[RMDB]
RNA sequence: GGGAACGACUCGAGUAGAGUCGAAAAUGAGACAAACACGCUUCACAAUGUGCGGCAAAGAAACAUUGCUUAUGCAAAGGCACUUCGCAAUGUGUGCUCAAACAUUGCUUAUUCAAACACGCUUCACAAAAGAAUCAGUGGUUCGCCACUGAUUCAAGUGUUCUGCAAUCUUCGGAUUGCAGAACACAAAAGAAACAACAACAACAAC
Reactivity to 2A3 in 0.01 (KOAc 150mM, MgCl2 10mM, bicine 150mM(pH8.5), 24C), signal-to-noise 2, nucleotides 027 to 156: u140g010a000g080a130c080a000a190a000c040a010c050g040c010u080u030c020a000c020a010a060u030g000u030g000c000g010g000c030a030a100a100g140a060a040a000c010a040u000u000g030c010u170u090a130u120g040c070a080a130a020g200g000c000a020c050u060u040c040g000c010a000a000u000g010u000g040u020g000c030u030c260a020a050a000c000a040u000u040g000c000u060u210a180u100u110c050a000a090a030c050a040c170g120c080u070u120c080a030c010a200a110a040a000g010a000a000u000c000a000g000u010g000g000u010u040c140g060c060c000a000c000u000g000a000u000u000c000a000a000
Notes
Conditions: 150 mM KOAc, 10 mM MgCl2 and 150 mM bicine (pH 8.5), 24 C. This 207-nucleotide RNA was probed chemically with 2A3. For 2A3, 911 sequencing reads were counted. The data come from the RNA Mapping Database (RMDB), library M2RFPK.